[RMDB]
RNA sequence: GGGAACGACUCGAGUAGAGUCGAAAACAGCGCGAGUGUAACGGAAGGAUGGACGGCUGUGUGGGAGAAACGCCACCAUCGCAGUACCGCUCAUUUAGGAGUGCUACAGCGGUCUCUGGUAAAGGGAAUCACGGACGUAUUUCGAUACGUCCGUGAUAAAAGAAACAACAACAACAAC
Reactivity to DMS in 0.01 (KOAc 150mM, MgCl2 10mM, bicine 150mM(pH8.5), 24C), signal-to-noise 2, nucleotides 027 to 126: c110a120g010c010g050c080g010a150g030u000g010u010a110a090c090g000g000a110a120g020g000a070u000g030g000a040c080g000g000c080u000g030u000g000u000g000g010g000a140g000a060a090a090c150g020c030c010a050c020c070a040u000c030g000c020a100g010u010a020c170c000g010c000u010c030a160u010u020u010a100g000g000a060g010u010g010c230u000a040c020a080g010c030g010g000u000c050u000c020u000g000g030u000a030a080a080g000g000g020a120
Reactivity to 2A3 in 0.01 (KOAc 150mM, MgCl2 10mM, bicine 150mM(pH8.5), 24C), signal-to-noise 2, nucleotides 027 to 126: c030a020g050c030g020c020g050a040g050u100g020u150a070a030c060g040g040a030a050g080g000a040u070g030g010a040c030g000g000c030u000g010u020g000u070g030g040g000a090g060a080a170a020c070g010c020c000a020c000c010a060u060c010g000c020a000g010u020a040c020c020g000c030u000c020a050u090u060u140a170g080g000a040g020u020g020c020u010a030c020a030g000c000g000g050u020c050u010c000u050g080g040u120a090a060a060g030g020g040a110